[RMDB]
RNA sequence: GGGAACGACUCGAGUAGAGUCGAAAACUCUUGUUAGGUGAAAGUUGAUGGUCGCCGUGUCAGUCCAUGCCUUUGAAAACAGUUCUAUGUAGUAGGGAGUCGAGAACCUAUGAGAGCUAGAACUUGCUAUGCCUUGGACUCUUCGGAGUCCAAGGAAUCAAUAUUAUAGGUUCGCCUAUAAUAUUGAAAAAGAAACAACAACAACAAC
Reactivity to 2A3 in 0.01 (KOAc 150mM, MgCl2 10mM, bicine 150mM(pH8.5), 24C), signal-to-noise 3, nucleotides 027 to 156: c020u030c010u030u100g060u060u100a100g040g030u060g050a140a060a060g040u060u030g050a070u060g030g000u020c020g000c040c010g010u010g020u040c050a020g020u040c030c020a030u080g020c030c030u070u100u160g120a060a070a040a040c030a020g010u020u000c020u030a060u230g030u040a050g010u010a010g020g000g050a050g060u050c030g060a030g020a180a030c010c000u010a030u050g050a110g010a010g110c010u030a000g000a040a040c000u010u060g000c020u090a090u180g020c010c000u000u010g000g000a010c000u000c000u020u030c180g090g000a000g000u000c000c000a000a000g000g010a000a000
Reactivity to DMS in 0.01 (KOAc 150mM, MgCl2 10mM, bicine 150mM(pH8.5), 24C), signal-to-noise 4, nucleotides 027 to 156: c030u000c040u000u000g010u000u000a050g020g000u010g010a060a070a100g010u000u010g010a110u000g020g010u000c040g030c030c010g020u000g000u000c030a090g020u000c040c040a070u010g020c030c020u000u000u010g000a080a060a050a050c030a050g020u000u000c010u000a040u010g000u000a190g000u000a040g020g000g010a100g020u010c140g010a250g010a110a140c010c000u000a030u000g000a110g010a120g010c120u000a040g000a030a050c030u000u000g040c020u000a080u000g010c000c000u000u000g010g010a030c000u000c000u000u000c300g050g010a030g030u000c000c000a000a010g010g000a010a020